An RNA of 207 nucleotides, treated with 2A3 and read out base by base. The reactions ran in a buffer of 150 mM KOAc, 10 mM MgCl2 and 150 mM bicine (pH 8.5), at 24 C. It was measured as part of the RMDB library OK3TST.
RNA sequence: GGGAACGACUCGAGUAGAGUCGAAAACUCUUGACCUUGUGAUCUGCCCACCUCGGCCUCCCAAAGUGAUGGGAUUACAGGCAUGAGCCACUGCACCUGGCUGAGAACUUUUUAAAAACAUAUUUUCCUCAAAAAGCUAAAUCUGGAAAGUACCAUAGGAGGUAAAUGGAUUCGUCCAUUUACCUCCAAAAGAAACAACAACAACAAC
Reactivity to 2A3 in 0.01 (KOAc 150mM, MgCl2 10mM, bicine 150mM(pH8.5), 24C), signal-to-noise 1, nucleotides 027 to 156: c030u090c020u050u080g060a080c010c080u080u220g010u100g070a080u010c020u010g000c000c070c030a060c010c070u020c080g000g000c030c050u080c040c000c070a000a050a050g120u120g120a220u120g000g030g000a030u040u050a050c000a000g040g030c030a030u100g000a010g090c000c000a030c020u050g000c050a060c010c010u020g000g000c000u030g010a030g000a000a010c030u170u050u030u120u220a080a160a040a070a000c030a000u080a090u130u140u080u000c010c000u000c020a000a140a000a000a000g050c020u100a060a190a020u120c000u020g010g010a000a000a100g120u110a000c000c000a040u300a040